[RMDB]
RNA sequence: GGGAACGACUCGAGUAGAGUCGAAAAAAGUCGGCAUCGCCACCGUUAUCCUGAUAAAAACCAUUCAGGCUGGUUUGUUUACGGAAGGGGGCCGACUGGCGAAUUAAAUCCAGCACCAUGGUAAGUGCCUGGCCUAUAGUUUCGACUAUAGGCCAGGAAAAGAAACAACAACAACAAC
Reactivity to 2A3 in 0.01 (KOAc 150mM, MgCl2 10mM, bicine 150mM(pH8.5), 24C), signal-to-noise 3, nucleotides 027 to 126: a000a000g040u030c030g000g000c000a100u050c050g180c190c000a020c000c000g000u030u020a040u130c010c010u070g090a030u230a050a070a030a020a100c020c000a010u060u120c060a030g110g000c060u020g000g120u070u070u090g100u060u110u080a010c000g000g010a020a040g120g000g000g030g000c010c000g000a000c000u000g000g000c090g050a010a020u160u100a170a030a020u070c010c010a000g000c050a030c030c000a030u070g010g010u070a090a040g070u060g080
Reactivity to DMS in 0.01 (KOAc 150mM, MgCl2 10mM, bicine 150mM(pH8.5), 24C), signal-to-noise 4, nucleotides 027 to 126: a070a020g020u000c010g000g000c010a070u000c030g030c010c010a150c010c010g010u000u010a060u010c030c040u010g000a080u030a040a040a030a030a040c020c000a100u000u000c030a030g000g020c230u010g000g010u000u000u010g010u000u000u020a040c010g000g020a130a140g000g000g020g000g000c000c000g020a000c020u000g000g010c100g020a070a080u030u030a040a050a090u020c020c000a060g020c170a130c040c050a180u000g020g020u000a150a180g000u030g000